Conditions: 150 mM KOAc, 10 mM MgCl2 and 150 mM bicine (pH 8.5), 24 C. Chemical mapping of a 207-nucleotide RNA with 2A3. Reactivities are given for positions 27 through 156.

RNA sequence: GGGAACGACUCGAGUAGAGUCGAAAACAAGGAAGUGCCCACAAAAGAUGUGGCUUACUGGCUACAUAAAAAGACAGGACAUUGGGGACCACAUACCUUUUGGGACAUAGUGAAAAUUGAGGACUACCACUAUGAUAUAAAGAUAUAGUACUCAUCACACCACCCAUGCUUUCGAGCAUGGGUGGUGAAAAGAAACAACAACAACAAC
Reactivity to 2A3 in 0.01 (KOAc 150mM, MgCl2 10mM, bicine 150mM(pH8.5), 24C), signal-to-noise 1, nucleotides 027 to 156: c060a040a010g040g020a080a090g160u010g040c040c050c000a060c060a040a060a000a000g110a020u040g010u000g000g000c000u110u230a050c040u110g020g080c020u040a020c030a070u270a070a140a000a000a000g050a000c060a050g050g010a060c000a020u080u210g090g000g000g080a000c050c000a000c000a040u240a190c000c020u090u120u270u090g020g030g000a000c040a000u050a010g040u040g000a030a020a030a030u180u050g020a010g030g060a010c020u060a060c000c020a030c000u050a000u020g070a000u020a000u030a090a160a000g120a030u170a020u050a200g090u010a000c020u050c030a060u050c010a060